[RMDB]
RNA sequence: GGGAACGACUCGAGUAGAGUCGAAAACCUAGGUGCAUAGUGUCUACGUGCUGCCGCUUUGCGGCCAACGGCAUUUUGCUGUUGGAUGCUAAUUCGUUGGCAUCAGUAAUUGUGGCACUUUGUCACUCACAGAUCUCCGCUUCGGCGGAGAUCUGUGAAAAGAAACAACAACAACAAC
Reactivity to 2A3 in 0.01 (KOAc 150mM, MgCl2 10mM, bicine 150mM(pH8.5), 24C), signal-to-noise 2, nucleotides 027 to 126: c000c000u010a090g000g070u000g000c000a010u010a010g020u000g000u000c050u170a030c000g000u040g000c000u030g000c000c020g070c080u110u090u300g020c000g000g050c000c000a000a000c000g030g000c000a080u100u160u150u300g000c000u000g000u000u000g000g000a000u000g020c020u000a150a100u100u040c240g050u120u030g000g010c050a000u000c000a000g030u000a140a050u100u300g040u000g030g020c000a000c020u030u020u000g000u030c000a000c000u070